[RMDB]
RNA sequence: GGGAACGACUCGAGUAGAGUCGAAAAGAGUAGUUUUAGAAGAUGAAUGUAGCUUUGAUCAUGUUUAGUUUGAGUUGCUGGGACACCUAGGUGUGGUCGGGGGUCAAGCAUUGGUGAUUCAGAAGUCUAGGUUGGAGACACAGUUUUGGGAAUUGCACGUACUACUAUCCUUCGGGAUAGUAGUACGAAAAGAAACAACAACAACAAC
Reactivity to DMS in 0.01 (KOAc 150mM, MgCl2 10mM, bicine 150mM(pH8.5), 24C), signal-to-noise 1, nucleotides 027 to 156: g010a190g010u000a060g020u000u000u010u000a110g040a130a110g000a090u000g000a090a070u010g020u000a060g030c050u030u010u000g000a100u000c060a070u010g000u000u000u000a100g030u010u000u030g020a110g020u000u000g040c000u000g000g020g030a120c070a030c040c010u000a040g040g000u010g000u000g000g000u000c070g020g010g010g000g000u010c060a060a120g010c040a100u010u000g010g030u010g010a080u000u000c050a150g010a050a090g010u000c040u000a080g010g020u010u000g010g010a070g000a080c070a060c050a090g020u000u010u000u000g040g000g000a120a060u000u000g010c060a190
Reactivity to 2A3 in 0.01 (KOAc 150mM, MgCl2 10mM, bicine 150mM(pH8.5), 24C), signal-to-noise 3, nucleotides 027 to 156: g060a020g040u080a030g020u070u060u100u140a060g030a090a010g010a060u090g050a120a090u090g010u070a020g040c050u080u050u100g030a080u090c060a080u080g080u050u120u070a060g020u020u020u090g050a050g010u020u050g020c020u050g000g020g040a020c020a020c020c010u030a040g030g010u050g010u010g050g030u030c020g030g000g000g010g000u010c050a020a010g010c010a040u000u110g000g000u010g020a060u040u000c020a040g020a120a000g030u010c010u050a040g000g090u020u050g040g000a020g010a010c020a000c010a080g020u040u050u070u080g030g000g060a070a080u050u060g010c050a010